[RMDB]
Background
An RNA of 177 nucleotides, treated with DMS and 2A3 and read out base by base. 2A3 adducts were read by reverse transcription with SuperScript II with manganese. The RNA was probed in 150 mM KOAc, 10 mM MgCl2 and 150 mM bicine (pH 8.5) at 24 C.
RNA sequence: GGGAACGACUCGAGUAGAGUCGAAAAGCAUGUCAUUCACUUUGAGAUCCCCUCUAGGGUAAGGCACACCGUGAGUGGAUGUGCCACUAAGAAGGAGGCAGCAGGCUGAGCGUGGUGGCUCACGCCUUAGUCGCUCUCUUUUCGAAGAGAGCGACUAAAAAGAAACAACAACAACAAC
Reactivity to DMS in 0.01 (KOAc 150mM, MgCl2 10mM, bicine 150mM(pH8.5), 24C), signal-to-noise 1, nucleotides 027 to 126: g000c030a070u000g000u000c040a060u000u000c040a040c100u000u000u000g000a190g010a120u000c080c030c010c040u010c120u010a090g020g010g000u000a070a090g020g030c020a000c000a030c000c000g050u010g010a180g020u010g040g000a100u000g000u010g000c000c010a070c040u000a100a070g010a040a050g010g000a080g010g010c000a050g040c120a090g000g020c010u000g020a010g020c010g000u000g010g000u000g030g020c000u010c000a010c200g040c020c030u000
Reactivity to 2A3 in 0.01 (KOAc 150mM, MgCl2 10mM, bicine 150mM(pH8.5), 24C), signal-to-noise 1, nucleotides 027 to 126: g000c090a110u040g020u030c050a170u100u090c040a110c100u110u110u160g020a040g020a130u090c010c020c000c050u020c060u050a070g100g000g000u060a080a150g020g000c040a000c000a010c000c010g050u070g230a110g020u300g000g030a090u070g000u020g020c010c000a010c000u000a010a050g030a000a050g030g020a100g000g010c000a010g000c000a000g030g000c010u000g010a000g000c020g000u040g000g090u010g080g050c000u010c020a000c010g000c000c040u000